About this RNA:
This 177-nucleotide RNA was probed chemically with DMS. For DMS, 4,969 sequencing reads were counted. The RNA was probed in 150 mM KOAc, 10 mM MgCl2 and 150 mM bicine (pH 8.5) at 24 C. It was measured as part of the RMDB library TTRINS. High DMS reactivity at an A or C suggests that its Watson-Crick edge is free.

[RMDB]
RNA sequence: GGGAACGACUCGAGUAGAGUCGAAAAGAUAUGGACCGGCCAGUUUCAUCAUGGAAAGAGGGAGAUGCUUUCGGAAACGAAAGGCAUCAUCGAUCUCUUUCCAUGAUGAAACUGGCGGUCCUAAGUCCUAAGACAUCAUGUUCGCAUGAUGUCUUAGAAAAGAAACAACAACAACAAC
Reactivity to DMS in 0.01 (KOAc 150mM, MgCl2 10mM, bicine 150mM(pH8.5), 24C), signal-to-noise 3, nucleotides 027 to 126: g020a100u000a230u010g030g000a000c010c010g030g030c010c000a010g020u000u010u010c010a010u000c000a000u000g010g000a040a010a020g000a030g000g000g010a210g010a020u000g000c010u000u010u000c020g010g000a150a120a260c010g000a010a010a030g010g000c060a040u010c020a150u010c150g000a180u000c000u000c000u000u000u000c000c000a000u000g000a000u010g010a000a000a010c000u000g000g000c000g010g010u000c000c000u000a010a040g000u000c020